[RMDB]
RNA sequence: GGGAACGACUCGAGUAGAGUCGAAAAGUACCCUUGUUCGCAAGGGUACAAAGACAGACUUCACUGUCAUAAAGAAGGUAACAUCACAGUUACAAUAAGAGAAAAGCACCUACUUCGGUAGGUGCAAGCGAAGCACUAUGUUCGCAUAGUGCUUCGCAAAAGAAACAACAACAACAAC
Reactivity to DMS in 0.01 (KOAc 150mM, MgCl2 10mM, bicine 150mM(pH8.5), 24C), signal-to-noise 1, nucleotides 027 to 126: g030u000a010c000c000c000u000u000g020u000u050c210g020c000a010a000g020g010g010u000a000c000a040a070a100g000a080c000a000g000a260c080u010u000c070a210c020u000g000u040c010a090u000a040a030a120g010a120a070g010g000u000a000a030c010a110u000c290a020c240a180g010u000u000a000c010a100a010u000a090a120g000a180g010a070a030a060a090g020c020a000c000c010u020a030c020u000u030c130g010g000u000a000g000g010u000g000c000a000a030
The record gives the reactivity of an RNA of 177 nucleotides to DMS.
The RNA was probed in 150 mM KOAc, 10 mM MgCl2 and 150 mM bicine (pH 8.5) at 24 C.
The DMS profile rests on 581 reads.